[RMDB]
RNA sequence: GGGAACGACUCGAGUAGAGUCGAAAAGUCAUCCCAGCACGUUGGGAGGCCAAGGCAGGAGGAUCACUGGAGGCCAGAAUUUAAACAGCAGCCUGGGCAACAUAGCGACACCACGUCUUUACAAAGGCUCGAUCCAGGAUUUCGAUCCUGGAUCGAGAAAAGAAACAACAACAACAAC
Reactivity to DMS in 0.01 (KOAc 150mM, MgCl2 10mM, bicine 150mM(pH8.5), 24C), signal-to-noise 1, nucleotides 027 to 126: g000u030c110a050u000c000c000c000a110g000c300a030c300g010u000u000g000g030g000a100g000g080c120c000a220a080g000g020c000a000g010g000a020g000g030a190u020c300a030c010u030g000g000a180g010g000c070c020a020g010a080a090u080u000u090a020a080a190c020a000g070c160a170g060c050c000u000g000g030g000c130a080a070c150a060u020a070g000c000g010a250c030a000c000c000a020c110g000u000c000u000u060u100a050c090a030a090a120g000g000
Reactivity to 2A3 in 0.01 (KOAc 150mM, MgCl2 10mM, bicine 150mM(pH8.5), 24C), signal-to-noise 2, nucleotides 027 to 126: g020u010c000a140u050c050c000c000a020g050c110a020c120g060u110u020g010g000g010a020g000g080c000c060a160a030g060g090c010a010g020g150a030g020g000a130u110c090a210c120u130g010g090a060g000g000c020c070a000g010a020a020u070u120u060a250a150a020c090a030g110c030a000g000c000c040u050g040g000g000c000a010a040c020a090u080a020g080c050g100a000c000a000c080c000a020c000g010u000c000u020u120u050a120c170a040a280a050g000g030